[RMDB]
Conditions: 150 mM KOAc, 10 mM MgCl2 and 150 mM bicine (pH 8.5), 24 C.
An RNA of 177 nucleotides, treated with 2A3 and DMS and read out base by base.
DMS (dimethyl sulfate) methylates the pairing face of unpaired adenines and cytosines.
For DMS the reverse transcriptase was MarathonRT.
As a SHAPE reagent, 2A3 marks flexible, mostly unpaired nucleotides at the ribose 2'-OH.
RNA sequence: GGGAACGACUCGAGUAGAGUCGAAAAUAGGUUGAAUUCGUUCAACCUACAGGCAAGCAAGCAGCGCAACGACACAAGGCGAUAAUAAGAUAGCGCAUGCUGAUACAUCGGUCUUCGGACCGAUGAAUAUUAACUUACCUUUCGAGGUAAGUUAAUAAAAAGAAACAACAACAACAAC
Reactivity to 2A3 in 0.01 (KOAc 150mM, MgCl2 10mM, bicine 150mM(pH8.5), 24C), signal-to-noise 9, nucleotides 027 to 126: u050a000g000g000u010u010g020a010a010u080u080c150g040u080u000c010a000a000c000c000u010a030c010a000g100g060c050a040a070g010c020a040a010g000c010a030g000c000g000c020a050a050c030g090a020c020a010c030a230a060g140g020c060g070a050u070a200a070u120a120a080g120a150u140a050g000c000g000c030a040u040g000c000u010g010a020u030a160c000a000u000c000g000g000u000c000u020u040c170g080g010a000c000c000g000a000u000g000a000a000
Reactivity to DMS in 0.01 (KOAc 150mM, MgCl2 10mM, bicine 150mM(pH8.5), 24C), signal-to-noise 9, nucleotides 027 to 126: u010a010g010g010u000u000g010a010a020u000u010c200g020u000u000c000a010a000c000c000u000a010c110a080g010g010c120a090a110g010c130a110a040g010c030a030g010c020g020c010a110a120c070g010a080c110a090c210a080a090g000g010c040g010a080u000a070a090u010a100a110g010a120u000a080g010c010g010c020a080u000g010c010u000g000a140u010a130c010a010u000c000g000g000u000c000u000u010c190g020g010a010c000c000g010a000u000g000a060a070